Chemical mapping of a 177-nucleotide RNA with DMS and 2A3. For 2A3 the reverse transcriptase was SuperScript II with manganese. Reactivities are given for positions 27 through 126. DMS (dimethyl sulfate) methylates the pairing face of unpaired adenines and cytosines.
[RMDB]
RNA sequence: GGGAACGACUCGAGUAGAGUCGAAAAGGCGUAGCGUUCGCGCUACGCCAAAUGAGCAUGUACAAAUCGCCAAAGUACAUGCGAAAUAAAAGAGGCCAUAAAAAACCACUUAGUUCGCUAAGUGGAAGUACAGAUUACGGUUCGCCGUAAUCUGUACAAAAGAAACAACAACAACAAC
Reactivity to DMS in 0.01 (KOAc 150mM, MgCl2 10mM, bicine 150mM(pH8.5), 24C), signal-to-noise 1, nucleotides 027 to 126: g020g010c000g020u000a020g060c000g020u000u010c240g030c010g050c010u000a000c000g010c000c000a000a030a030u020g020a130g010c020a050u020g000u000a000c000a010a080a050u000c300g000c040c090a070a070a130g000u000a020c020a020u010g000c010g000a030a080a030u010a080a050a060a110g010a130g020g010c040c060a090u120a020a080a050a050a110a080c010c000a010c000u010u000a000g020u000u000c140g040c000u000a010a000g030u000g010g010a030a050
Reactivity to 2A3 in 0.01 (KOAc 150mM, MgCl2 10mM, bicine 150mM(pH8.5), 24C), signal-to-noise 3, nucleotides 027 to 126: g000g010c010g010u010a000g000c020g010u030u050c250g000c000g020c110u000a000c010g000c000c000a000a000a010u040g010a010g010c020a000u010g000u010a010c040a010a120a130u100c100g030c050c010a060a020a040g000u000a000c000a010u000g000c010g020a070a120a040u210a030a110a050a040g250a180g010g000c080c040a070u300a080a140a010a000a000a020c000c000a010c000u010u010a000g000u070u050c240g020c110u000a010a000g000u010g000g010a010a000